[RMDB]
RNA sequence: GGGAACGACUCGAGUAGAGUCGAAAAAGGCGGGGUAAACCCAUACCAUGGGAACUGCUGGGUCCCUCGGAUGUCGAUCCCCUCUCCCGUUCGGGAAAAGGGGGACUCCGGGACUCCCUGCAGGCUGAGAGGUGGGACUUCGGUCCCACCAAAAGAAACAACAACAACAAC
Reactivity to 2A3 in 0.01 (KOAc 150mM, MgCl2 10mM, bicine 150mM(pH8.5), 24C), signal-to-noise 4, nucleotides 027 to 129: a000g070g000c060g010g030g000g010u090a090a060a050c000c000c000a000u070a030c080c030a060u130g020g000g030a070a030c010u010g000c020u020g000g010g000u000c070c000c020u000c010g020g000a070u170g020u010c030g040a200u170c000c000c000c010u000c010u000c010c000c000g150u280u240c230g000g000g000a010a020a030a020g010g000g000g000g000a010c000u000c000c000g000g000g000a010c040u020c000c000c000u000g000c010a010g030g000c060u110g030a050g010a000
Reactivity to DMS in 0.01 (KOAc 150mM, MgCl2 10mM, bicine 150mM(pH8.5), 24C), signal-to-noise 5, nucleotides 027 to 129: a000g000g050c080g150g000g000g000u030a000a110a160c000c000c000a080u060a130c110c090a160u080g030g000g060a180a140c030u020g060c020u010g020g030g000u010c160c080c000u000c040g070g000a050u120g030u040c060g100a140u060c080c030c010c000u020c180u000c000c000c050g070u070u150c180g030g000g030a000a030a120a110g050g000g070g000g010a000c000u030c000c030g100g010g000a000c290u040c010c040c020u000g030c030a050g040g010c120u020g030a090g040a180